[RMDB]
RNA sequence: GGGAACGACUCGAGUAGAGUCGAAAACAAAUACAUGGUCGGAUGAAUGUUCGACGCGUCGUCGGCGACGCGCGGCACGCGAUGGUGCAGCACCAACGAGUCAAUUAGACGCUCCGUCAGACCGUACAUGCCCGGCGUUUUACCGUCGCACGGCGGGCACGCUAAUGAUAUUCGUAUCAUUAGCGUGAAAAGAAACAACAACAACAAC
Reactivity to 2A3 in 0.01 (KOAc 150mM, MgCl2 10mM, bicine 150mM(pH8.5), 24C), signal-to-noise 6, nucleotides 027 to 156: c010a010a070a020u230a050c080a070u120g080g010u010c020g030g050a050u050g110a190a120u230g030u060u090c040g050a090c030g030c000g030u020c000g000u020c060g120g080c050g010a010c000g010c020g000c050g020g010c030a000c030g020c030g080a060u060g010g040u090g020c070a050g080c040a050c060c040a090a080c060g020a030g040u030c030a050a110u090u040a130g010a050c050g040c110u040c060c010g020u000c010a010g030a060c000c020g030u050a050c020a050u070g000c010c000c000g050g040c000g010u020u020u050u170a070c030c010g000u000c010g000c050a040c040g060g000c010g000g000g000
Reactivity to DMS in 0.01 (KOAc 150mM, MgCl2 10mM, bicine 150mM(pH8.5), 24C), signal-to-noise 3, nucleotides 027 to 156: c030a110a120a140u010a050c080a110u010g040g010u000c010g010g000a130u000g000a080a080u000g020u000u010c010g020a070c000g020c020g000u010c010g010u000c130g030g020c020g010a040c010g040c030g040c020g020g000c000a030c020g040c030g010a120u000g000g060u010g020c040a170g040c050a140c040c030a080a080c010g000a140g000u010c040a070a160u000u010a150g010a060c040g040c000u000c050c050g000u020c020a100g010a050c010c000g040u000a110c040a050u000g000c000c000c010g020g010c030g010u000u000u000u000a080c030c000g010u000c010g010c060a060c020g040g010c000g000g010g020